[RMDB]
RNA sequence: GGGAACGACUCGAGUAGAGUCGAAAAGGGUAGUCCUGGCUGUAAACAAUGCUCGCUAGGUAUGUCACGCGCCAUGAGCACGUGAUGUGCCGUAGGGAAGACGAUAAGCGAGCCGCCUGGGAAGUACAUAUAGGCCCAGAUUCGUCUGGGCCUAUAUAAAAGAAACAACAACAACAAC
Reactivity to DMS in 0.01 (KOAc 150mM, MgCl2 10mM, bicine 150mM(pH8.5), 24C), signal-to-noise 3, nucleotides 027 to 126: g010g010g000u000a050g010u000c000c000u010g000g000c010u000g010u030a090a080a140c240a100a100u020g000c010u000c000g030c000u000a070g000g020u010a000u000g000u000c000a000c020g010c060g000c010c030a160u020g000a240g050c000a030c020g020u010g000a010u000g020u010g010c000c000g000u020a110g000g000g010a140a060g000a190c110g030a100u020a060a300g000c010g000a020g010c010c140g000c020c000u000g010g000g000a050a080g010u020a040c100
Reactivity to 2A3 in 0.01 (KOAc 150mM, MgCl2 10mM, bicine 150mM(pH8.5), 24C), signal-to-noise 3, nucleotides 027 to 126: g020g000g030u050a040g060u020c000c000u010g020g000c010u050g040u220a030a060a070c080a110a140u120g000c000u000c010g000c030u030a030g000g030u010a000u000g030u010c010a010c010g010c000g000c010c000a180u300g010a030g070c000a010c030g000u000g000a010u020g000u020g000c000c000g040u040a040g000g070g090a100a040g100a040c090g040a090u020a090a000g000c010g000a010g010c000c000g010c000c000u020g030g000g000a050a030g070u050a020c050
Source: RMDB libraries RFM100 and RFMREP, as collected in RNAgym. Chemical mapping of a 177-nucleotide RNA with DMS and 2A3. For 2A3, 2,583 sequencing reads were counted. Reactivities are given for positions 27 through 126. In probing experiments dimethyl sulfate is read out at A N1 and C N3, which are open when not base-paired.